[RMDB]
RNA sequence: GGGAACGACUCGAGUAGAGUCGAAAAUUCUUGGACAGCAGGAUUAGCGAUGUGUAAUGACAACAUCAAAGUUUGGCCCAUGCUUCUUUAACCUGUGUAUCAUGGCAUCUUUACCCUAACAUGCAUGCAAACUAUUUGAUUUCGAUCAAAUAGUUUGAAAAGAAACAACAACAACAAC
Reactivity to DMS in 0.01 (KOAc 150mM, MgCl2 10mM, bicine 150mM(pH8.5), 24C), signal-to-noise 9, nucleotides 027 to 126: u000u010c020u000u010g010g010a070c080a090g020c040a040g010g000a090u000u000a060g020c150g000a030u000g010u000g010u010a090a110u020g010a110c100a070a050c040a050u010c070a100a100a080g010u000u000u000g010g010c040c020c030a070u010g010c030u000u000c040u000u000u010a070a080c060c030u000g010u000g010u000a070u010c030a040u000g010g000c030a030u000c030u000u000u000a130c030c010c020u010a060a090c210a040u010g010c100a060u020g020
Reactivity to 2A3 in 0.01 (KOAc 150mM, MgCl2 10mM, bicine 150mM(pH8.5), 24C), signal-to-noise 9, nucleotides 027 to 126: u040u010c010u020u050g050g040a040c030a040g020c010a010g030g050a150u060u090a030g050c040g050a030u020g050u010g030u090a100a120u150g090a050c020a050a020c010a080u070c020a040a060a070g050u050u090u080g050g000c010c010c000a010u050g010c010u020u050c000u030u100u050a060a070c010c010u040g010u010g030u080a040u090c030a040u050g090g000c010a020u010c020u040u080u100a120c000c010c000u020a050a040c030a040u090g040c010a010u080g030
Structure probing data (DMS and 2A3) for a 177-nucleotide construct.
The reactions ran in a buffer of 150 mM KOAc, 10 mM MgCl2 and 150 mM bicine (pH 8.5), at 24 C.
Reactivities are rounded to 0.1 and cut off at 0 and 3.